[RMDB]
RNA sequence: GGGAACGACUCGAGUAGAGUCGAAAAAGUGAAACCAUGUUCAAAGAGUAUGAAUUCUACUGACUUCUCAUCAGUAUUAUGUAGACAACCAUUUUGAUCACAGGAGUCGAUCUCAAUGCACAGAGAAACGUAUUAUUAGCUUCGGCUAAUAAUACGUAAAAGAAACAACAACAACAAC
Reactivity to DMS in 0.01 (KOAc 150mM, MgCl2 10mM, bicine 150mM(pH8.5), 24C), signal-to-noise 8, nucleotides 027 to 126: a090g020u000g000a120a080a160c060c030a100u000g000u000u000c040a060a040a140g010a120g010u000a070u000g000a100a090u000u000c040u000a020c030u010g000a040c040u000u010c060u000c060a230u000c020a020g010u000a010u000u000a040u000g010u000a100g010a050c110a060a080c090c040a120u000u000u000u000g000a050u010c060a080c120a100g000g010a120g000u000c020g000a070u000c010u000c010a080a110u010g000c120a060c130a080g010a090g000a030a110
Reactivity to 2A3 in 0.01 (KOAc 150mM, MgCl2 10mM, bicine 150mM(pH8.5), 24C), signal-to-noise 6, nucleotides 027 to 126: a000g110u080g030a060a010a010c040c010a020u050g030u000u040c070a110a100a020g050a040g030u080a100u140g060a100a070u040u020c010u030a020c010u000g020a010c000u070u000c030u020c040a040u020c010a010g030u000a030u120u050a060u090g090u030a040g020a110c020a060a050c050c010a040u040u060u040u100g030a030u050c030a010c030a150g030g090a030g020u020c020g010a030u000c000u000c010a060a120u130g030c090a060c050a090g080a010g050a110a100

An RNA of 177 nucleotides, treated with DMS and 2A3 and read out base by base. For 2A3 the reverse transcriptase was SuperScript II with manganese. The data come from the RNA Mapping Database (RMDB), library OK2TST. The DMS profile rests on 9,867 reads.